[RMDB]
RNA sequence: GGGAACGACUCGAGUAGAGUCGAAAAUUGGACCUGUAUGGGCGGGGAGAACCGGCUGAUGCGGUGACGGUGGCCGCCGAACUGGAUCGCCGUGGGCUGCUGCGCCGCAUCGGCGGUGCUCCCUACCUGUUAUGUUCUCUUUCGAGAGAACAUAACAAAAAGAAACAACAACAACAAC
Reactivity to 2A3 in 0.01 (KOAc 150mM, MgCl2 10mM, bicine 150mM(pH8.5), 24C), signal-to-noise 9, nucleotides 027 to 126: u100u080g110g050a070c020c020u070g070u170a210u260g030g020g020c080g000g010g000g000a010g000a010a020c010c010g240g020c050u010g000a010u010g000c000g010g020u010g040a180c010g000g000u020g020g010c010c000g020c010c010g020a030a060c110u160g080g110a120u070c030g040c100c050g060u180g040g070g000c000u010g010c000u010g000c010g010c000c010g000c000a000u000c000g000g000c000g000g000u000g010c000u000c000c000c000u000a000c000c000
Reactivity to DMS in 0.01 (KOAc 150mM, MgCl2 10mM, bicine 150mM(pH8.5), 24C), signal-to-noise 4, nucleotides 027 to 126: u010u050g010g000a150c040c020u000g030u030a080u030g010g020g020c050g020g010g000g010a010g010a030a000c010c000g010g050c010u000g000a010u000g010c000g000g000u000g010a120c020g000g020u000g000g020c000c010g030c040c020g000a050a100c160u030g010g010a100u000c050g000c120c120g020u010g010g020g020c000u000g010c000u000g000c040g000c010c000g020c000a000u000c000g000g010c000g000g000u010g000c000u000c000c000c000u010a000c020c000
Structure probing data (2A3 and DMS) for a 177-nucleotide construct. For 2A3 the reverse transcriptase was SuperScript II with manganese. Conditions: 150 mM KOAc, 10 mM MgCl2 and 150 mM bicine (pH 8.5), 24 C. The data come from the RNA Mapping Database (RMDB), library OK1LIB. For DMS the reverse transcriptase was MarathonRT.